Notes
Chemical mapping of a 177-nucleotide RNA with DMS. The data come from the RNA Mapping Database (RMDB), library TTRINS. The DMS profile rests on 1,005 reads. Values are in units of 0.01, from 0 to 300, in steps of 10.
[RMDB]
RNA sequence: GGGAACGACUCGAGUAGAGUCGAAAAGAUAUGGAUUUACCCUCCGAAGAACUAUAUAGCAUCAAAUCGCUAUUCGGAAACGAAUAGCGAUUUGAUGGAAUAUAGGGAGGAGGUAAAUCCUAAGUCACUUAGUAUCACCGUUCGCGGUGAUACUAAGAAAAGAAACAACAACAACAAC
Reactivity to DMS in 0.01 (KOAc 150mM, MgCl2 10mM, bicine 150mM(pH8.5), 24C), signal-to-noise 1, nucleotides 027 to 126: g010a060u000a300u010g000g010a020u000u010u000a000c160c080c000u010c010c000g010a090a190g030a130a300c010u010a000u000a010u010a120g020c000a020u000c000a000a000a000u000c000g030c010u000a000u010u000c020g030g000a180a160a180c000g000a040a000u000a010g010c000g000a000u000u000u000g020a020u000g010g020a140a010u000a030u000a000g000g010g010a000g030g000a010g010g030u000a000a000a000u000c010c010u010a040a060g010u010c030a240